[RMDB]
RNA sequence: GGGAACGACUCGAGUAGAGUCGAAAAGGAGGAACCUUCGGGUUCCUCCCAUUACCGAGAACCUUCCUCGGUAUAAACAAGGAACCCUUGGAAACAAGGGAAAUAUUCACGUCUUCGGACGUGAAAAGCAUGUAUACAGUUUCGACUGUAUACAUGCAAAAGAAACAACAACAACAAC
Reactivity to 2A3 in 0.01 (KOAc 150mM, MgCl2 10mM, bicine 150mM(pH8.5), 24C), signal-to-noise 4, nucleotides 027 to 126: g010g010a020g000g020a000a000c030c040u100u110c300g040g000g000u000u000c010c000u000c000c000c000a000u000u020a010c000c010g000a000g010a030a080c010c050u130u090c020c000u020c000g000g000u010a020u050a010a020a000c020a020a040g170g020a110a090c010c000c000u010u020g020g020a040a040a020c010a000a010g000g000g020a010a010a010u040a000u000u010c000a000c010g010u000c000u020u050c210g090g000a000c000g000u000g000a000a000a000a000
Reactivity to DMS in 0.01 (KOAc 150mM, MgCl2 10mM, bicine 150mM(pH8.5), 24C), signal-to-noise 5, nucleotides 027 to 126: g020g000a020g000g010a010a020c000c000u000u010c210g020g010g010u000u000c000c000u010c000c000c050a050u010u010a040c010c000g010a020g000a130a160c200c170u000u010c100c010u000c010g010g010u000a000u000a060a050a080c260a090a140g010g000a100a160c000c000c010u000u000g010g000a130a090a160c010a000a000g000g000g000a010a010a060u000a140u000u000c000a000c010g000u000c000u000u010c160g020g000a010c000g020u000g000a010a000a060a130

Overview
This 177-nucleotide RNA was probed chemically with 2A3 and DMS. 2A3 adducts were read by reverse transcription with SuperScript II with manganese. Conditions: 150 mM KOAc, 10 mM MgCl2 and 150 mM bicine (pH 8.5), 24 C. Reactivities are given for positions 27 through 126.